Chemical mapping of a 207-nucleotide RNA with 2A3. Source: RMDB library RNAMAK, as collected in RNAgym. 2A3 adducts were read by reverse transcription with SuperScript II with manganese. High 2A3 reactivity points to a flexible backbone, as in loops and unpaired stretches.
[RMDB]
RNA sequence: GGGAACGACUCGAGUAGAGUCGAAAACACGUAUGGUUCGCCAUACGUGAAAAAAACCUUUGUGCCACUGCGCGACGAUCUACCCAUUCCCAUUGGGAAUGUGGUAGGGAGCGUAAGUGGCACUCUGGUAAAAAAGCUAUGAGUUCGCUCAUAGCAAGAGGAUAGCUGUGUUCGCACAGCUAUCCUCAAAAGAAACAACAACAACAAC
Reactivity to 2A3 in 0.01 (KOAc 150mM, MgCl2 10mM, bicine 150mM(pH8.5), 24C), signal-to-noise 2, nucleotides 027 to 156: c000a000c000g010u000a000u000g000g080u090u110c230g060c160c000a000u000a000c000g010u020g000a060a000a000a000a000a000a000c000c000u000u000u000g000u000g000c000c000a000c000u040g000c000g030c000g050a190c020g000a020u030c000u000a000c000c000c000a000u000u000c020c030c190a280u200u300g020g010g000a000a000u110g100u220g000g020u000a000g000g000g000a010g000c020g000u020a160a300g000u000g000g000c000a000c000u000c000u000g000g020u040a000a050a020a100a100a000g000c000u000a000u020g000a000g090u040u300c300g050c150u000c000a000u040a000g000c000a000a050